[RMDB]
RNA sequence: GGGAACGACUCGAGUAGAGUCGAAAAAUACUUAAUGGUUCUUGCGGAAUCAGAAAAUGCCCGAAAACGCAUGCAAAAAGAGCGUCAAGAAAUGAUGCAAUAUGCUGUAGAAAAUGCUCUCAUAGACUGUAAUCAUCCCAUUCGUGGGAUGAUUACAAAAAGAAACAACAACAACAAC
Reactivity to 2A3 in 0.01 (KOAc 150mM, MgCl2 10mM, bicine 150mM(pH8.5), 24C), signal-to-noise 1, nucleotides 027 to 126: a060u060a040c050u090u110a030a070u110g000g000u020u010c010u010u150g140c120g060g000a010a000u010c010a030g020a010a190a040a000u140g060c000c000c000g020a040a030a040a000c090g000c040a040u180g010c010a000a000a160a270a000g040a060g000c000g000u020c050a040a020g140a290a240a100u150g010a000u070g000c000a020a000u040a050u270g000c010u050g000u060a010g160a020a070a030a060u070g020c010u020c010u010c030a080u090a200g060a110c000
Reactivity to DMS in 0.01 (KOAc 150mM, MgCl2 10mM, bicine 150mM(pH8.5), 24C), signal-to-noise 2, nucleotides 027 to 126: a110u010a110c110u010u000a110a140u000g020g000u010u010c000u000u030g050c260g030g000a020a000u010c010a020g000a060a100a120a090u010g030c000c000c000g000a090a080a080a160c100g000c040a000u010g030c040a030a110a100a160a060g020a200g000c010g010u000c040a030a140g010a070a140a140u000g020a000u000g020c000a070a090u010a080u000g010c000u000g060u000a110g000a080a020a070a080u000g000c030u000c040u000c130a080u010a130g000a090c160